This 177-nucleotide RNA was probed chemically with DMS and 2A3. For DMS, 1,918 sequencing reads were counted. The RNA was probed in 150 mM KOAc, 10 mM MgCl2 and 150 mM bicine (pH 8.5) at 24 C.
RNA sequence: GGGAACGACUCGAGUAGAGUCGAAAAGAUAUGGAGCUCCCAGGACAUGGAGAGAUGUCGGAAACGACAUCCUCCAACAGCCUGGAGCUCCUAAGUCAAAAGGGGCUGCAGUUCGCUGCAGCCCCAACAUGAAUCAAGACUUCGGUCUUGAUUCAUGAAAAGAAACAACAACAACAAC
Reactivity to DMS in 0.01 (KOAc 150mM, MgCl2 10mM, bicine 150mM(pH8.5), 24C), signal-to-noise 2, nucleotides 027 to 126: g020a020u000a080u000g010g000a030g010c000u000c240c130c160a010g000g030a060c120a130u020g000g000a020g030a170g000a000u000g010u010c010g020g000a020a010a060c000g000a020c000a010u000c000c000u010c000c000a060a020c210a180g000c010c000u000g000g000a040g030c000u000c000c000u010a000a070g010u000c010a140a080a120a170g010g000g030g000c000u010g000c000a010g030u000u010c220g000c000u000g000c000a000g010c000c000c000c010a000a000
Reactivity to 2A3 in 0.01 (KOAc 150mM, MgCl2 10mM, bicine 150mM(pH8.5), 24C), signal-to-noise 1, nucleotides 027 to 126: g020a010u000a020u070g000g000a000g000c000u070c030c100c010a030g050g020a050c230a300u300g010g000a010g000a000g000a000u000g000u000c010g010g010a010a000a010c000g000a000c000a000u010c000c000u010c000c000a010a010c000a000g030c000c010u020g030g030a000g000c000u010c000c000u000a000a000g010u000c010a000a000a030a240g000g000g000g000c000u000g060c020a050g040u080u200c300g140c140u010g010c010a010g040c000c000c000c000a010a000